[RMDB]
Overview
The data come from the RNA Mapping Database (RMDB), libraries RFM100 and RFMREP. Structure probing data (DMS and 2A3) for a 177-nucleotide construct.
RNA sequence: GGGAACGACUCGAGUAGAGUCGAAAAGGGAUUGUGUGCCAACGGCUAUGAUAGAUAUGAAUAGAGCACGAGAUAAUGUGCUUACAGAAAGUUGGUUGAAUUGAAUGCAAUUAAUGUUUGGAGGCACGUAAGGAGGUACAUUCGUGUACCUCCUUACAAAAGAAACAACAACAACAAC
Reactivity to DMS in 0.01 (KOAc 150mM, MgCl2 10mM, bicine 150mM(pH8.5), 24C), signal-to-noise 5, nucleotides 027 to 126: g010g000g000a060u000u000g010u010g040u000g030c020c020a040a100c060g010g000c040u000a070u020g010a130u010a070g020a110u010a120u020g000a100a080u020a100g010a030g000c020a000c020g010a130g010a150u020a080a080u060g000u000g000c020u000u000a100c140a040g000a070a070a100g000u000u000g000g000u000u020g010a060a110u020u010g020a090a060u010g010c020a020a040u010u010a050a050u000g000u000u010u020g020g000a110g010g010c080a070c100
Reactivity to 2A3 in 0.01 (KOAc 150mM, MgCl2 10mM, bicine 150mM(pH8.5), 24C), signal-to-noise 5, nucleotides 027 to 126: g050g010g000a030u070u040g020u040g010u050g060c010c010a010a020c030g040g010c050u070a040u090g060a050u100a160g100a050u110a040u200g120a150a070u110a130g040a000g030c010a000c040g090a090g050a120u190a140a100u210g000u000g000c000u000u020a010c000a020g130a040a110a010g030u050u040g010g000u000u020g030a070a070u080u100g040a080a050u080g020c020a010a010u060u070a080a050u160g090u050u070u070g040g000a030g020g040c030a000c110

Record summary: DMS adducts were read by reverse transcription with MarathonRT. The reactions ran in a buffer of 150 mM KOAc, 10 mM MgCl2 and 150 mM bicine (pH 8.5), at 24 C.